[RMDB]
Source: RMDB library OK1LIB, as collected in RNAgym.
This 177-nucleotide RNA was probed chemically with DMS and 2A3.
Reactivities are given for positions 27 through 126.
The 2A3 profile rests on 1,369 reads.
For DMS the reverse transcriptase was MarathonRT.
For DMS, 1,286 sequencing reads were counted.
RNA sequence: GGGAACGACUCGAGUAGAGUCGAAAAUUUAACGUCUUCGUCCAUUUGGGCUUCAAAUUCAUCUAGAAGUGCUCGUGCUUCUGCAAUUGAUUGUGUGUUCAUCAAUUGAUGGCGAAGUUCGCUAGCGCGGAGCGGAGUCUUUCGAGACUCCGCUCCGAAAAGAAACAACAACAACAAC
Reactivity to DMS in 0.01 (KOAc 150mM, MgCl2 10mM, bicine 150mM(pH8.5), 24C), signal-to-noise 1, nucleotides 027 to 126: u000u000u010a020a130c110g020u000c000u000u010c070g000u040c000c000a030u000u000u010g060g020g000c060u010u060c070a000a120a110u010u070c070a060u030c110u000a000g000a030a000g020u000g000c290u010c240g000u110g000c030u000u030c000u010g010c070a000a130u000u010g000a050u000u060g010u010g050u000g030u000u010c040a010u050c070a100a090u000u000g050a010u000g000g010c020g000a010a040g000u010u000c000g040c080u000a030g000c040g090
Reactivity to 2A3 in 0.01 (KOAc 150mM, MgCl2 10mM, bicine 150mM(pH8.5), 24C), signal-to-noise 3, nucleotides 027 to 126: u080u080u090a090a030c050g040u010c000u030u020c000g060u060c020c000a010u070u020u020g000g020g050c000u130u070c060a000a100a240u100u000c000a060u060c110u220a050g040a050a000g060u080g050c110u070c110g080u170g010c010u010u030c030u060g010c030a050a100u060u050g000a090u120u010g010u000g040u000g080u120u080c010a040u030c010a020a080u070u010g030a040u060g000g000c000g040a020a000g030u100u030c020g010c030u030a030g060c080g020